[RMDB]
RNA sequence: GGGAACGACUCGAGUAGAGUCGAAAAGAGGUGAAGACCCGUGGCCAGCUUCUGUUGUUGCCAUCGGCCAUUGCUUUUUGUUCGCUUGCUUUUGGUUUUGCAAGAAGAGCGGCCUCUGUCUCUGAUCGUAAUGACCAGAGUUCGCUCUGGUCAUUACAAAAGAAACAACAACAACAAC
Reactivity to DMS in 0.01 (KOAc 150mM, MgCl2 10mM, bicine 150mM(pH8.5), 24C), signal-to-noise 1, nucleotides 027 to 126: g000a010g000g020u000g020a060a080g000a120c080c050c060g040u000g000g000c040c010a140g020c020u000u010c110u000g040u010u000g000u000u010g000c020c060a040u000c300g000g000c010c020a020u000u020g010c060u000u000u010u010u020g010u010u020c200g000c000u000u000g000c020u000u000u000u000g020g010u000u000u000u020g010c000a020a050g000a040a090g000a000g020c020g010g010c020c000u010c020u010g000u000c010u000c000u000g040a170u000c160

Background: Chemical mapping of a 177-nucleotide RNA with DMS. Reactivities are given for positions 27 through 126. Reactivities are rounded to 0.1 and cut off at 0 and 3. Conditions: 150 mM KOAc, 10 mM MgCl2 and 150 mM bicine (pH 8.5), 24 C. For DMS, 1,222 sequencing reads were counted. DMS adducts were read by reverse transcription with MarathonRT.